[RMDB]
RNA sequence: GGGAACGACUCGAGUAGAGUCGAAAAGAUAUGGAAGAAUUUCCGACCAGUAGAGCCGAUAAGCUCCCAUCGGAAACGAUGGUGAGCUUUUGACGGCUACCUACUGGUCGGAAAUUCUUCCUAAGUCCUAUCAAUAAGGGUUCGCCCUUAUUGAUAGAAAAGAAACAACAACAACAAC
Reactivity to DMS in 0.01 (KOAc 150mM, MgCl2 10mM, bicine 150mM(pH8.5), 24C), signal-to-noise 2, nucleotides 027 to 126: g000a080u010a300u020g020g000a000a020g000a050a000u000u000u000c000c000g010a020c000c020a020g010u000a010g010a050g010c000c010g020a180u000a030a010g010c000u000c000c000c010a000u000c000g020g000a190a110a240c000g010a010u000g000g030u020g010a010g010c000u000u000u000u000g000a170c100g020g000c000u000a030c300c010u010a000c000u000g020g000u000c000g000g000a000a000a000u000u000c000u010u000c000c000u000a010a090g000u000c040
Description: The data come from the RNA Mapping Database (RMDB), library TTRINS. The record gives the reactivity of an RNA of 177 nucleotides to DMS. DMS adducts were read by reverse transcription with MarathonRT. The DMS profile rests on 3,828 reads. Values cover nucleotides 27 to 126.